[RMDB]
RNA sequence: GGGAACGACUCGAGUAGAGUCGAAAAAUUAAGUUACCUACAGGGCAGUUGGUUUCGAAAGGUACCACCAGUGCUAAGAAGUCAAAGGAACAAAUAGAAGAAUGGAGGGCAAAGCUAGGUAAAGAACCCAUACAAGUUGAUUCGUCAACUUGUAUGGAAAAGAAACAACAACAACAAC
Reactivity to 2A3 in 0.01 (KOAc 150mM, MgCl2 10mM, bicine 150mM(pH8.5), 24C), signal-to-noise 3, nucleotides 027 to 126: a000u120u090a090a010g070u030u040a070c010c010u030a020c040a070g030g030g000c020a040g040u060u040g010g020u010u070u030c010g050a090a080a050g070g000u030a020c010c000a010c010c030a030g010u010g030c030u060a110a060g030a050a010g010u070c040a070a020a080g040g000a040a030c040a030a100a030u170a080g100a110a010g030a050a040u060g020g040a040g020g000g040c040a000a010a020g020c040u040a010g010g030u010a010a010a040g030a020a030c010
Reactivity to DMS in 0.01 (KOAc 150mM, MgCl2 10mM, bicine 150mM(pH8.5), 24C), signal-to-noise 4, nucleotides 027 to 126: a080u000u000a060a160g000u000u000a070c030c000u010a060c100a130g000g000g040c070a080g000u000u000g010g010u000u000u000c030g010a080a090a100g010g010u000a050c060c050a090c100c090a090g000u000g030c050u000a080a100g000a070a050g000u000c060a060a060a080g010g000a050a060c090a040a070a090u000a080g000a080a070g010a060a050u010g010g010a050g000g000g010c040a050a040a100g000c100u000a030g000g020u000a020a070a110g010a090a130c190
Conditions: 150 mM KOAc, 10 mM MgCl2 and 150 mM bicine (pH 8.5), 24 C. The record gives the reactivity of an RNA of 177 nucleotides to 2A3 and DMS. It was measured as part of the RMDB library OK2TRN. In probing experiments dimethyl sulfate is read out at A N1 and C N3, which are open when not base-paired. 2A3 is a SHAPE reagent: it acylates the 2'-hydroxyl of flexible nucleotides of all four kinds. For 2A3 the reverse transcriptase was SuperScript II with manganese. Values cover nucleotides 27 to 126. For 2A3, 5,091 sequencing reads were counted. The DMS profile rests on 4,159 reads.